[RMDB]
RNA sequence: GGGAACGACUCGAGUAGAGUCGAAAACCAUAAUUGCCAAUGAUGAGCAAUUCGCUAUUGCCGCCUAAAAACGGUUAGCCGGGGCUGCUAGAGCCUUGUUACCAAAGAUAGCCGGCGGGUACUUCGGAAAAGAGGCCAAAGUUCGCUUUGGCCUCAACUCUUAUGUUACCUUCGGGUAACAUAAGAGAAAAGAAACAACAACAACAAC
Reactivity to DMS in 0.01 (KOAc 150mM, MgCl2 10mM, bicine 150mM(pH8.5), 24C), signal-to-noise 1, nucleotides 027 to 156: c000c040a100u000a000a040u000u000g030c020c020a130a230u000g000a160u020g020a130g030c010a020a010u000u000c090g000c020u010a020u000u000g000c020c010g070c030c030u010a080a090a120a130a070c070g010g000u020u000a030g000c040c040g060g020g060g040c010u010g020c060u010a160g000a090g000c030c080u010u000g000u000u000a090c160c080a080a150a100g000a110u000a060g030c070c050g020g020c100g060g080g020u010a060c050u010u000c010g050g000a070a040a070a090g010a060g000g000c030c010a010a050a010g020u000u000c300g050c040u000u000u000g030g020c000c030u000c000a020a030
Reactivity to 2A3 in 0.01 (KOAc 150mM, MgCl2 10mM, bicine 150mM(pH8.5), 24C), signal-to-noise 1, nucleotides 027 to 156: c030c000a000u180a070a030u050u000g000c000c000a190a170u250g180a110u050g050a110g040c030a000a000u080u150c040g030c050u070a030u140u160g030c020c020g080c000c000u000a020a050a030a030a030c030g010g040u110u050a050g000c050c010g030g000g000g040c020u030g050c070u080a050g010a000g270c010c020u030u040g080u100u080a020c000c010a070a040a000g040a000u020a020g050c030c030g030g020c030g030g030g000u030a020c030u050u210c080g070g030a000a000a130a070g020a000g000g000c000c000a020a010a000g020u070u070c170g010c190u060u000u020g020g080c010c000u000c000a000a000
Conditions: 150 mM KOAc, 10 mM MgCl2 and 150 mM bicine (pH 8.5), 24 C. Structure probing data (DMS and 2A3) for a 207-nucleotide construct. Reactivities are given for positions 27 through 156. It was measured as part of the RMDB library M2RFPK. For DMS, 1,675 sequencing reads were counted. For 2A3, 472 sequencing reads were counted.